This 177-nucleotide RNA was probed chemically with 2A3 and DMS.
Values cover nucleotides 27 to 126.

RNA sequence: GGGAACGACUCGAGUAGAGUCGAAAAAAGUUGCACCAGGUACGGAUACCAGACGUUGCCAAACAGGGUGACAUGAGGAUCACCCAUCUACUGUCCCUUGGCAGCCGUACCUGGUGCUGGUGAAAAACAUUUCGCGAUUAUUCGUAAUCGCGAAAUGAAAAGAAACAACAACAACAAC
Reactivity to 2A3 in 0.01 (KOAc 150mM, MgCl2 10mM, bicine 150mM(pH8.5), 24C), signal-to-noise 1, nucleotides 027 to 126: a000a020g300u220u040g000c010a000c000c000a010g000g000u010a020c000g000g000a000u020a040c010c000a000g050a000c090g040u040u070g110c090c070a110a090a040c100a190g010g010g000u000g000a000c020a050u300g140a090g160g050a120u010c000a010c020c000c000a010u050c020u040a080c070u110g010u030c020c000c000u000u010g020g000c030a010g000c000c000g020u010a000c000c000u000g020g000u000g000c000u000g000g000u070g020a090a060a000a000a020
Reactivity to DMS in 0.01 (KOAc 150mM, MgCl2 10mM, bicine 150mM(pH8.5), 24C), signal-to-noise 3, nucleotides 027 to 126: a090a070g010u000u020g010c020a010c010c010a010g010g000u000a010c000g000g000a080u000a070c050c040a130g010a060c100g010u000u010g000c110c060a020a050a160c290a170g000g010g020u000g010a000c020a130u020g020a190g010g030a150u000c020a030c030c000c000a060u010c070u010a060c140u000g030u000c020c110c070u000u000g010g030c040a090g010c000c000g000u000a000c000c010u000g000g000u000g000c000u000g000g020u000g010a050a020a060a080a090